[RMDB]
RNA sequence: GGGAACGACUCGAGUAGAGUCGAAAAAAAGAUAUGGAGAUCAUUAGAGCUUGGAUUUAUACACUAAGCCAUAUCGGAAACGAUAUGGUAUGUGUAUUGUCAGCUCUAGGGAUCUCCUAAGUCAAAACCAUAGACAUGUCUUCGGACAUGUCUAUGGAAAAGAAACAACAACAACAAC
Reactivity to 2A3 in 0.01 (KOAc 150mM, MgCl2 10mM, bicine 150mM(pH8.5), 24C), signal-to-noise 2, nucleotides 027 to 126: a000a020a010g070a000u100a030u140g010g010a000g000a000u000c010a060u020u020a010g000a010g010c060u140u220g150g020a020u300u300u080a020u090a000c030a010c010u040a300a020g000c020c000a010u000a010u010c000g010g000a080a090a020c020g000a010u010a000u000g040g050u030a030u110g000u020g020u000a000u000u010g010u010c000a000g000c030u000c010u010a000g000g000g000a000u000c010u000c010c000u010a020a020g000u000c030a000a010a050a150
Reactivity to DMS in 0.01 (KOAc 150mM, MgCl2 10mM, bicine 150mM(pH8.5), 24C), signal-to-noise 1, nucleotides 027 to 126: a080a110a120g010a030u000a300u020g000g000a010g010a010u000c010a030u000u000a010g010a010g010c010u000u040g010g010a030u000u020u000a030u000a010c010a000c000u030a090a300g010c010c000a010u000a010u000c000g000g000a170a080a210c000g000a010u000a010u000g030g020u000a070u000g010u000g000u000a000u000u010g000u000c010a040g010c000u000c000u000a010g000g000g010a020u000c000u000c000c000u000a000a020g000u000c020a100a100a170a150

Chemical mapping of a 177-nucleotide RNA with 2A3 and DMS. DMS (dimethyl sulfate) methylates the pairing face of unpaired adenines and cytosines. The DMS profile rests on 1,313 reads. 2A3 adducts were read by reverse transcription with SuperScript II with manganese. Conditions: 150 mM KOAc, 10 mM MgCl2 and 150 mM bicine (pH 8.5), 24 C.